Structure probing data (2A3) for a 207-nucleotide construct.
RNA sequence: GGGAACGACUCGAGUAGAGUCGAAAAUGGCUUCUCCUGGACGAUCGCUCGCUGUUUUUGUGGCUGGCUUUCAGCGGGCUGGAGGAGCCGGGAGCGGAGGCGGAGGACCGAGCCAAAAACGUCAGCCUAUAGAGGAAGCUGUUCGCAGCUUCCUCAAGGAUCGUUUUAAUUUCGAUUAAAACGAUCCAAAAGAAACAACAACAACAAC
Reactivity to 2A3 in 0.01 (KOAc 150mM, MgCl2 10mM, bicine 150mM(pH8.5), 24C), signal-to-noise 1, nucleotides 027 to 156: u130g000g000c000u010u000c000u010c000c040u070g180g070a040c090g050a150u200c120g000c010u000c000g000c000u030g000u050u030u000u050u050g120u070g020g040c000u010g010g000c000u000u010u000c010a010g000c010g020g000g030c040u010g020g020a000g000g010a020g000c000c020g000g000g000a030g000c060g000g060a020g020g010c080g010g040a060g010g050a030c040c070g040a030g070c030c060a040a030a000a000a000c050g000u010c010a000g020c000c000u070a080u060a100g000a000g000g000a000a000g000c010u010g020u100u140c260g010c110a000g000c000u000u000c000c000u000c000a000a000